[RMDB]
RNA sequence: GGGAACGACUCGAGUAGAGUCGAAAAGAUAUGGAACAUCUCUGAGACUACCCACCACCUGAACUACAGUGGCUAUUCGGAAACGAAUAGAGAGCUGCAGGUGAGGUCUCAGAGAUGUUCCUAAGUCGCAUAGGCUAAGGUUCGCCUUAGCCUAUGCAAAAGAAACAACAACAACAAC
Reactivity to DMS in 0.01 (KOAc 150mM, MgCl2 10mM, bicine 150mM(pH8.5), 24C), signal-to-noise 1, nucleotides 027 to 126: g000a070u020a300u000g020g000a000a000c000a040u000c000u000c000u000g030a070g000a010c000u010a060c100c050c120a300c050c000a010c010c000u000g000a080a070c120u020a300c020a020g000u000g010g000c010u000a000u010u000c000g010g000a050a050a290c020g010a010a010u000a000g000a000g020a200g020c040u000g000c000a050g000g000u000g020a160g020g020u000c000u000c000a020g000a000g000a000u000g010u000u000c000c000u000a000a140g000u000c110
The data come from the RNA Mapping Database (RMDB), library TTRINS. The record gives the reactivity of an RNA of 177 nucleotides to DMS.